Chemical mapping of a 207-nucleotide RNA with DMS and 2A3. The DMS profile rests on 4,205 reads.
[RMDB]
RNA sequence: GGGAACGACUCGAGUAGAGUCGAAAAUGCUGUCGUUGACAGCGCCCAACGCUUCACAACCUGAAAGAAGCGCCUGUUAUCAGGACGGUUGAUCCAUUUACCGGUGCGGACCUCUGCAAACACCGGGUUUAACAAGCAUCUUUCGAGAUGCUUGUAAGAUAGGUAUAUCUUUCGAGAUAUACCUAUCAAAAGAAACAACAACAACAAC
Reactivity to DMS in 0.01 (KOAc 150mM, MgCl2 10mM, bicine 150mM(pH8.5), 24C), signal-to-noise 2, nucleotides 027 to 156: u010g010c010u000g010u000c000g000u000u000g010a040c020a030g030c000g000c060c040c000a140a070c020g000c010u000u000c010a220c100a120a180c050c020u010g010a090a200a300g000a040a020g040c000g020c040c050u000g040u010u000a160u000c040a030g030g000a150c050g020g000u000u020g020a300u010c050c000a200u000u000u010a070c000c010g010g020u010g000c020g020g020a170c190c050u020c100u010g030c050a170a220a020c010a020c000c020g010g010g000u000u010u020a090a050c000a000a020g000c000a000u000c010u000u000u010c290g050a010g010a030u000g020c000u000u000g000u000a030a110
Reactivity to 2A3 in 0.01 (KOAc 150mM, MgCl2 10mM, bicine 150mM(pH8.5), 24C), signal-to-noise 5, nucleotides 027 to 156: u160g000c000u000g010u020c080g300u080u290g010a000c000a000g010c000g020c000c010c000a040a020c010g020c000u000u010c030a030c010a140a010c000c000u010g000a020a000a000g000a000a000g000c010g050c000c000u140g040u240u160a190u300c020a000g000g010a010c040g000g000u000u010g020a070u060c040c000a060u060u090u210a080c000c010g000g000u020g000c030g010g130a130c020c110u190c120u220g100c060a050a080a030c010a010c000c000g010g000g000u050u170u060a020a000c000a000a000g000c000a000u000c010u020u140u170c200g090a020g000a000u010g000c000u000u000g000u000a000a010
The reactions ran in a buffer of 150 mM KOAc, 10 mM MgCl2 and 150 mM bicine (pH 8.5), at 24 C. Reactivities are given for positions 27 through 156.